[RMDB]
An RNA of 177 nucleotides, treated with 2A3 and DMS and read out base by base. DMS (dimethyl sulfate) methylates the pairing face of unpaired adenines and cytosines.
RNA sequence: GGGAACGACUCGAGUAGAGUCGAAAAAGCGUACGCUACGGCGUACGCAACCAAUGAUGACGGAUCAACCGGCUGAUCGAAUGAUGACGUCCGCAUCACCUGAGGACGUCCGCUUACGAGCGGACGACUUCACACACAAUUUCGAUUGUGUGUGAAGAAAAGAAACAACAACAACAAC
Reactivity to 2A3 in 0.01 (KOAc 150mM, MgCl2 10mM, bicine 150mM(pH8.5), 24C), signal-to-noise 9, nucleotides 027 to 126: a000g010c000g000u000a000c000g000c010u020a040c270g110g000c000g010u000a000c000g010c000a000a010c000c000a030a040u120g020a020u030g040a060c020g020g010a020u070c050a070a090c050c030g090g000c100u130g080a140u130c050g090a120a140u210g040a080u090g040a070c050g020u010c000c010g000c010a010u020c000a030c020c040u090g070a080g060g090a000c010g000u000c000c000g000c000u070u040a080c270g060a030g000c000g000g000a000c000g010a010
Reactivity to DMS in 0.01 (KOAc 150mM, MgCl2 10mM, bicine 150mM(pH8.5), 24C), signal-to-noise 5, nucleotides 027 to 126: a090g020c000g010u000a000c000g030c000u010a130c200g030g000c000g030u000a000c000g010c010a010a050c030c010a140a090u020g000a020u010g010a120c040g000g000a060u000c110a110a120c150c050g010g000c110u000g010a070u000c070g010a110a080u020g000a060u000g010a120c140g000u010c010c010g000c040a020u000c020a060c160c090u000g000a110g000g010a110c000g020u000c000c000g010c000u000u010a100c170g010a030g020c000g000g000a010c010g000a130